[RMDB]
RNA sequence: GGGAACGACUCGAGUAGAGUCGAAAACGAACCUCUGCACCGGAAGAUCCUAUGUUUUAAAAAUAUAGAACAACAAUAUACUAGCGUAUUUUAUCAUUGCUUCUUAGAAAAAAGGGGCCAAUUUGGCAGUCACCGAAAGUUUCGACUUUCGGUGACUAAAAGAAACAACAACAACAAC
Reactivity to 2A3 in 0.01 (KOAc 150mM, MgCl2 10mM, bicine 150mM(pH8.5), 24C), signal-to-noise 1, nucleotides 027 to 126: c000g000a000a000c010c010u010c000u110g040c000a050c000c030g020g040a020a020g010a130u130c000c000u090a130u200g070u000u000u070u070a110a110a040a180a000u170a030u030a160g170a100a100c010a030a000c000a050a050u180a020u000a070c000u020a010g070c000g070u020a050u000u090u010u000a040u010c000a120u080u130g000c000u030u000c000u030u040a140g300a010a070a000a000a000a000g000g000g000g000c000c000a000a050u010u020u020g020g020c020